[RMDB]
RNA sequence: GGGAACGACUCGAGUAGAGUCGAAAAGGUGGAUUGCGAUCUUUAGAACUGGAAUAUCUGAUGAUGCAAAUUCCCUACGGAUCAUUGACUUAUGACAUAGGCGGGAAUUUUGCAUCGCAUCUGUUCACCUACUCGACUCAUUCGUGAGUCGAGUAGGAAAAGAAACAACAACAACAAC
Reactivity to DMS in 0.01 (KOAc 150mM, MgCl2 10mM, bicine 150mM(pH8.5), 24C), signal-to-noise 2, nucleotides 027 to 126: g010g010u000g020g010a070u010u000g010c070g000a060u000c060u000u010u000a080g010a060a150c130u010g000g010a150a100u010a060u000c150u000g000a020u010g000a040u000g000c010a010a030a040u000u000c000c000c000u010a210c050g000g030a090u000c030a020u010u000g000a130c270u010u000a050u000g000a050c040a130u000a290g020g000c280g000g000g000a010a000u010u000u000u000g020c000a020u000c000g000c040a040u010c070u020g010u000u010c040a190
Reactivity to 2A3 in 0.01 (KOAc 150mM, MgCl2 10mM, bicine 150mM(pH8.5), 24C), signal-to-noise 2, nucleotides 027 to 126: g060g030u030g020g060a060u060u090g080c090g040a090u010c040u110u140u050a090g030a120a060c070u090g110g040a140a080u050a080u150c060u070g140a130u050g000a010u010g100c000a000a000a000u000u000c000c000c010u010a010c000g080g060a120u000c000a000u010u140g110a230c070u200u120a000u020g020a020c010a070u180a080g020g020c030g010g040g030a010a000u080u120u020u050g020c010a000u030c000g000c000a030u020c010u060g060u010u040c020a050
About this RNA
Conditions: 150 mM KOAc, 10 mM MgCl2 and 150 mM bicine (pH 8.5), 24 C. Chemical mapping of a 177-nucleotide RNA with DMS and 2A3. 2A3 adducts were read by reverse transcription with SuperScript II with manganese. Reactivities are given for positions 27 through 126. It was measured as part of the RMDB library OK2TRN.